[RMDB]
An RNA of 207 nucleotides, treated with 2A3 and read out base by base. The RNA was probed in 150 mM KOAc, 10 mM MgCl2 and 150 mM bicine (pH 8.5) at 24 C.
RNA sequence: GGGAACGACUCGAGUAGAGUCGAAAAAGUUUCUCGAUAAUUGAUCUGUAGAAUCUGUCAAGCAAAACCCCAAAACCUCACACUGAGAGCAUUUAGCCUGAUUACUCUUUAAAUCAAAUCAGGCAAUUCAAGGUCGCAGUCUUCGGACUGCGACCAACGAUUUAUUAUUGUUCGCAAUAAUAAAUCGAAAAGAAACAACAACAACAAC
Reactivity to 2A3 in 0.01 (KOAc 150mM, MgCl2 10mM, bicine 150mM(pH8.5), 24C), signal-to-noise 2, nucleotides 027 to 156: a020g000u000u040u080c020u010c030g020a060u190a300a070u130u250g030a060u050c070u110g140u150a030g040a120a040u040c030u030g120u110c040a050a040g050c020a050a080a070a220c020c010c010c010a000a120a020a100c040c040u060c010a120c020a060c170u140g110a010g010a000g040c000a000u030u030u020a020g000c000c000u000g010a000u020u030a050c000u010c050u220u300u080a020a000a030u300c130a010a010a020u020c020a020g000g000c000a000a000u030u030c010a030a070g020g000u000c010g000c000a000g000u000c050u100u150c230g090g020a010c020u000g000c020g010a000c010c000a000a000

It was measured as part of the RMDB library M2RFPK. Reactivities are rounded to 0.1 and cut off at 0 and 3.